RNA sequence: GGGAACGACUCGAGUAGAGUCGAAAAGCGAAGUUGGACGGCAAGACGUUGCCUGCGCUGCGUCUUGCCCUAUGUGGUGAAGGCAACGCAGGUAAGCUACUGAUUUUGUCCUGGGGCGGUCUCUGGACGACCAGGACGUGUUCGCACGUCCUGGUCGAAAAGAAACAACAACAACAAC
Reactivity to DMS in 0.01 (KOAc 150mM, MgCl2 10mM, bicine 150mM(pH8.5), 24C), signal-to-noise 1, nucleotides 027 to 126: g000c020g000a030a020g000u020u010g010g010a030c220g000g040c010a120a020g020a130c130g040u000u010g010c000c040u020g000c000g000c050u000g020c100g000u070c000u000u000g000c020c000c020u040a090u000g010u020g000g000u000g000a010a030g010g000c020a000a070c010g070c000a040g000g000u010a000a090g000c010u000a100c010u000g000a070u000u020u020u000g000u020c030c000u000g000g020g010g020c090g000g010u020c040u010c030u000g010g040a300
Reactivity to 2A3 in 0.01 (KOAc 150mM, MgCl2 10mM, bicine 150mM(pH8.5), 24C), signal-to-noise 3, nucleotides 027 to 126: g090c040g030a080a050g100u190u200g030g010a020c000g020g100c030a000a000g060a110c120g050u050u030g000c000c040u040g000c000g010c000u010g030c020g140u070c020u030u020g000c000c000c000u200a270u240g130u270g020g000u030g040a000a000g000g020c020a000a000c000g020c000a010g000g020u040a050a000g010c020u020a030c030u040g080a220u080u130u110u080g070u060c040c030u060g000g000g010g050c010g000g010u010c000u020c010u020g040g020a040
Source: RMDB library OK1LIB, as collected in RNAgym. Structure probing data (DMS and 2A3) for a 177-nucleotide construct. The 2A3 profile rests on 1,030 reads. DMS adducts were read by reverse transcription with MarathonRT. Reactivities are given for positions 27 through 126. 2A3 adducts were read by reverse transcription with SuperScript II with manganese.